[RMDB]
RNA sequence: GGGAACGACUCGAGUAGAGUCGAAAAGAUGUCAUUUCGUAAGGCUAUAUGAGGUGGCACUACAGGUACUAUGUCGCAUCAUGGUGCUUGUGAACUCGUAGCUUGAUGCGACAAGUUAUGAGUGAUCUAUUUUACUAUAGCCUUAGUGAGAUAGAGACAUACGUCCCCUAUUCGUAGGGGACGUAUGAAAAGAAACAACAACAACAAC
Reactivity to DMS in 0.01 (KOAc 150mM, MgCl2 10mM, bicine 150mM(pH8.5), 24C), signal-to-noise 3, nucleotides 027 to 156: g000a140u010g000u010c030a050u000u000u000c030g020u000a030a010g020g010c020u010a060u000a030u000g010a050g030g030u010g020g030c050a090c050u010a120c020a040g000g010u000a040c040u010a070u000g000u000c090g030c100a050u000c010a070u000g000g030u000g020c010u000u000g000u000g010a150a070c080u010c090g000u010a040g010c020u000u000g000a070u000g010c160g000a090c010a010a030g030u000u010a060u000g010a080g000u010g020a090u000c010u010a010u010u000u000u010a020c150u000a050u010a020g030c040c030u000u000a010g020u000g000a100g000a030u000a080g000a120g000a230
Reactivity to 2A3 in 0.01 (KOAc 150mM, MgCl2 10mM, bicine 150mM(pH8.5), 24C), signal-to-noise 6, nucleotides 027 to 156: g150a040u120g050u070c020a030u000u030u030c040g030u010a000a010g000g000c000u000a000u000a020u060g030a030g010g000u020g010g030c020a010c010u200a100c010a040g100g050u080a000c000u080a140u150g010u010c030g010c040a020u020c000a010u060g070g020u020g080c020u090u100g050u110g160a160a140c040u020c070g020u020a030g070c010u010u000g010a010u040g020c040g010a020c000a000a000g000u000u040a040u030g020a000g020u010g040a100u040c020u040a020u060u010u020u020a070c070u000a000u000a000g000c000c010u000u000a030g020u030g020a020g000a010u070a060g080a000g000a020